[RMDB]
RNA sequence: GGGAACGACUCGAGUAGAGUCGAAAAGUUAGGCGAGGCUCCUAUACAAACACAGGUUGCUGAUCUAACGACGUCGAGAGACGCCCAAGAUUAGGACAGGAUAUAUCGAACCAAGGUAUAUCCCCAUAAAACUCGGAACACUUCGGUGUUCCGAGAAGAUAGCAUUUUUCUUCGGAAAAAUGCUAUCAAAAGAAACAACAACAACAAC
Reactivity to DMS in 0.01 (KOAc 150mM, MgCl2 10mM, bicine 150mM(pH8.5), 24C), signal-to-noise 2, nucleotides 027 to 156: g000u000u000a040g020g000c010g000a110g020g020c050u000c010c020u020a120u000a180c090a030a040a120c060a050c140a080g030g030u000u000g020c020u000g020a050u010c020u010a070a190c030g000a020c000g000u000c010g010a300g010a300g020a000c010g010c000c010c040a230a060g010a090u000u010a080g010g020a300c120a010g000g010a020u000a010u000a010u000c020g030a070a300c130c130a100a150g010g000u000a030u000a020u020c010c000c040c010a040u000a080a070a060a230c000u000c010g020g000a030a050c010a000c020u010u020c290g030g000u000g040u000u000c000c000g010a000g040a010a020
Reactivity to 2A3 in 0.01 (KOAc 150mM, MgCl2 10mM, bicine 150mM(pH8.5), 24C), signal-to-noise 4, nucleotides 027 to 156: g000u010u000a010g010g050c100g100a130g060g000c040u020c030c000u100a090u090a200c170a060a240a010c130a000c040a090g050g020u280u160g040c020u050g020a090u000c000u000a000a000c000g020a010c000g000u000c010g010a030g000a010g010a100c000g010c000c010c000a030a030g090a090u160u300a040g060g040a050c100a120g020g010a010u000a000u000a000u010c030g020a080a120c120c060a160a070g000g000u000a000u000a000u010c010c000c000c000a030u190a090a140a020a030c000u000c000g000g000a000a000c010a000c000u050u100c200g080g000u000g000u000u010c000c000g000a000g000a000a000
About this RNA:
The data come from the RNA Mapping Database (RMDB), library M2RFPK. Structure probing data (DMS and 2A3) for a 207-nucleotide construct. For 2A3, 2,207 sequencing reads were counted. For 2A3 the reverse transcriptase was SuperScript II with manganese. Reactivities are given for positions 27 through 156. 2A3 is a SHAPE reagent: it acylates the 2'-hydroxyl of flexible nucleotides of all four kinds.